RNA sequence: GGGAACGACUCGAGUAGAGUCGAAAACGACGCAGGUUCGCCUGCGUCGCACUACCGAGAAUGCGACUCGGAAUAUUAAAACGCGCCUUGGAAACAAGGCAAAUAAGGCCAGAUUCGUCUGGCCUAAGAUAGAACAUGGGUUCGCCCAUGUUCUAUCAAAAGAAACAACAACAACAAC
Reactivity to DMS in 0.01 (KOAc 150mM, MgCl2 10mM, bicine 150mM(pH8.5), 24C), signal-to-noise 3, nucleotides 027 to 126: c020g000a020c000g000c000a000g010g010u000u010c240g030c000c000u000g020c000g010u000c010g000c050a110c070u000a150c020c000g000a010g030a050a070u010g040c030g000a050c000u000c000g000g000a160a060u000a110u010u010a030a010a010a020c020g050c060g010c010c000u000u010g010g000a170a080a200c000a010a010g000g020c010a010a040a060u000a100a030g010g010c000c000a000g000a040u000u010c180g000u000c000u000g000g000c010c000u000a000a040
Reactivity to 2A3 in 0.01 (KOAc 150mM, MgCl2 10mM, bicine 150mM(pH8.5), 24C), signal-to-noise 3, nucleotides 027 to 126: c000g000a000c000g010c010a000g040g010u050u080c100g130c060c000u010g000c010g000u010c010g000c000a010c010u060a060c000c020g000a000g020a060a090u150g010c050g040a020c030u000c020g010g160a090a080u240a050u090u180a030a060a020a000c040g050c020g010c020c010u000u000g010g010a000a010a050c000a000a000g020g000c000a010a010a010u040a000a000g000g000c010c000a000g000a030u030u080c110g090u000c080u010g020g000c000c000u000a000a010
Structure probing data (DMS and 2A3) for a 177-nucleotide construct. For 2A3, 4,498 sequencing reads were counted. Values cover nucleotides 27 to 126. 2A3 adducts were read by reverse transcription with SuperScript II with manganese. For DMS the reverse transcriptase was MarathonRT. Source: RMDB library M2PK50, as collected in RNAgym. DMS (dimethyl sulfate) methylates the pairing face of unpaired adenines and cytosines.